[RMDB]
This 177-nucleotide RNA was probed chemically with 2A3 and DMS.
DMS adducts were read by reverse transcription with MarathonRT.
RNA sequence: GGGAACGACUCGAGUAGAGUCGAAAAAGCGCGACUACGGUCGCGCAAACAGGGUUACAAUGCGUAUAACUACAAUACAAGAAAUUCCUCUUUGACUGGCCAGUAGCGAUAUUGGCCACUUUUUUAACCGAUAAUUGAUGUUCGCAUCAAUUAUCGGAAAAGAAACAACAACAACAAC
Reactivity to 2A3 in 0.01 (KOAc 150mM, MgCl2 10mM, bicine 150mM(pH8.5), 24C), signal-to-noise 5, nucleotides 027 to 126: a000g000c010g000c010g010a020c020u040a040c260g110g000u020c010g020c000g000c000a010a000a000c020a000g070g000g010u040u040a060c090a140a150u300g100c100g060u200a120u050a160a040c000u140a050c080a040a110u150a150c040a080a070g080a100a080a000u050u050c010c000u140c080u140u060u110g170a160c100u030g010g000c000c000a010g010u000a000g000c050g040a050u020a010u020u000g000g000c010c010a000c000u020u020u000u000u010u030a050a080
Reactivity to DMS in 0.01 (KOAc 150mM, MgCl2 10mM, bicine 150mM(pH8.5), 24C), signal-to-noise 1, nucleotides 027 to 126: a090g000c000g010c000g000a020c000u000a060c160g040g010u000c010g000c080g010c070a000a020a050c070a110g000g000g000u000u000a070c110a170a050u050g030c270g000u010a090u000a070a030c080u010a110c080a040a130u000a050c110a070a130g020a040a110a120u000u000c000c000u000c220u010u000u010g010a090c120u040g000g000c000c000a040g010u010a000g030c250g000a220u000a000u000u000g000g000c000c000a000c020u000u000u000u000u010u000a070a190
The RNA was probed in 150 mM KOAc, 10 mM MgCl2 and 150 mM bicine (pH 8.5) at 24 C.